[RMDB]
RNA sequence: GGGAACGACUCGAGUAGAGUCGAAAAUACGCUGGUAGCAGCAAGUAGCAGCUCAAUCCGCAGAUGAGCGGAAUAUACAGAUGACAAUGGAUCUCGAUAGAGAUGCUACAAUCGAGACCAUUAGAGAGACUCCCUAGGUAUUCGUACCUAGGGAGUCAAAAGAAACAACAACAACAAC
Reactivity to DMS in 0.01 (KOAc 150mM, MgCl2 10mM, bicine 150mM(pH8.5), 24C), signal-to-noise 2, nucleotides 027 to 126: u060a070c300g050c030u000g000g040u030a130g010c040a020g000c050a110a210g000u010a020g000c000a020g000c060u000c060a130a140u000c020c010g030c000a210g000a100u020g000a230g020c030g020g000a080a100u040a040u010a030c140a060g000a070u020g000a150c280a030a020u010g000g000a060u000c000u000c000g000a050u000a160g060a030g000a070u000g010c050u010a030c000a030a000u000c000g000a000g000a020c000c010a060u000u000a040g000a070g000a150
Reactivity to 2A3 in 0.01 (KOAc 150mM, MgCl2 10mM, bicine 150mM(pH8.5), 24C), signal-to-noise 3, nucleotides 027 to 126: u170a060c090g000c010u030g030g100u080a040g110c010a000g010c020a100a090g030u070a030g010c030a000g000c000u020c070a080a140u000c000c010g010c000a020g060a300u190g100a130g030c000g000g020a020a010u100a000u010a010c070a010g190a110u070g090a100c090a070a000u050g010g140a210u000c020u000c000g010a010u020a080g120a000g110a030u020g040c000u010a050c030a080a010u030c000g010a000g000a010c000c000a030u010u160a080g010a000g010a000